[RMDB]
About this RNA: Chemical mapping of a 207-nucleotide RNA with DMS and 2A3. The reactions ran in a buffer of 150 mM KOAc, 10 mM MgCl2 and 150 mM bicine (pH 8.5), at 24 C. It was measured as part of the RMDB library OK3TST. Values cover nucleotides 27 to 156. 2A3 adducts were read by reverse transcription with SuperScript II with manganese.

RNA sequence: GGGAACGACUCGAGUAGAGUCGAAAACACAGAAGCACAACCCAGCCAAACACCACAGCCUUCUCCAGAGCCGGCACUGUCCCGGCAACCAGGGGUGCCCCAGGCUAGCUCUUCUACCUCUGGGGCACCACGGACUCCCCUUGGCCACUCUUGGGACAUAUCAUUGAUACUUCGGUAUCAAUGAUAUAAAAGAAACAACAACAACAAC
Reactivity to DMS in 0.01 (KOAc 150mM, MgCl2 10mM, bicine 150mM(pH8.5), 24C), signal-to-noise 2, nucleotides 027 to 156: c070a090c060a100g010a090a110g040c020a100c040a080a090c030c000c020a130g040c030c020a110a080a090c050a070c030c020a070c070a100g020c030c020u000u010c030u000c000c030a140g020a170g040c040c020g040g020c040a080c100u000g020u000c040c010c020g000g000c020a030a040c050c010a140g000g000g000g010u000g030c010c000c000c010a040g020g000c070u010a050g020c300u000c160u000u000c020u000a040c030c010u010c010u010g020g000g040g040c000a000c010c000a000c030g000g000a100c080u000c010c010c010c030u010u010g010g020c000c040a040c080u000c040u000u010g020g030g010a060c130
Reactivity to 2A3 in 0.01 (KOAc 150mM, MgCl2 10mM, bicine 150mM(pH8.5), 24C), signal-to-noise 2, nucleotides 027 to 156: c070a000c010a020g100a140a010g060c040a030c010a060a100c010c020c010a010g040c020c050a100a100a010c050a030c040c030a040c020a060g050c010c000u050u050c030u040c030c020a030g010a020g080c010c010g030g010c060a070c190u120g040u100c000c000c000g020g000c010a020a030c010c010a020g000g000g080g030u010g000c010c000c000c000a010g020g000c020u000a010g040c020u050c040u300u090c020u090a050c000c030u180c000u060g010g000g000g020c000a000c000c000a000c000g000g020a020c020u050c010c010c000c020u030u030g040g000c030c010a070c020u090c010u060u100g010g010g030a020c010